An RNA of 177 nucleotides, treated with 2A3 and DMS and read out base by base. 2A3 adducts were read by reverse transcription with SuperScript II with manganese. The RNA was probed in 150 mM KOAc, 10 mM MgCl2 and 150 mM bicine (pH 8.5) at 24 C. It was measured as part of the RMDB library OK1LIB. Values cover nucleotides 27 to 126.
[RMDB]
RNA sequence: GGGAACGACUCGAGUAGAGUCGAAAAGCUGCGUGAGUUAUUGUAAAUGGCGCUGCGAUCCACGUCUUGUCGCAAAUCAACAAGAGAUUGAUCACGUAGCGUUUCGGUUGGCCCUUCGGUCGGCUGGUCAUGGUAGGCUGUUCGCGGCCUGCCAUGAAAAAGAAACAACAACAACAAC
Reactivity to 2A3 in 0.01 (KOAc 150mM, MgCl2 10mM, bicine 150mM(pH8.5), 24C), signal-to-noise 6, nucleotides 027 to 126: g020c010u010g000c010g010u020g020a050g030u130u090a080u080u070g080u080a030a040a070u090g030g000c000g000c030u010g000c030g010a020u020c020c020a030c010g060u000c020u030u050g040u030c030g000c030a000a010a080u060c010a000a080c010a060a030g040a000g020a150u040u080g010a010u020c000a000c010g000u010a000g000c000g000u000u010u000c010g000g000u010u000g020g010c000c010c000u040u100c060g000g000u000c000g000g000c020u030g020g050
Reactivity to DMS in 0.01 (KOAc 150mM, MgCl2 10mM, bicine 150mM(pH8.5), 24C), signal-to-noise 9, nucleotides 027 to 126: g010c010u000g000c010g000u000g000a050g010u010u010a060u010u000g000u020a070a080a100u020g000g010c070g000c090u000g000c030g000a040u010c060c100a100c120g010u010c050u010u010g000u010c050g000c090a050a100a100u030c080a050a050c050a060a060g000a120g010a110u010u020g000a090u000c010a020c000g020u000a010g010c010g010u000u000u000c010g000g020u000u000g010g000c020c040c170u020u020c110g010g020u000c020g000g000c000u010g010g010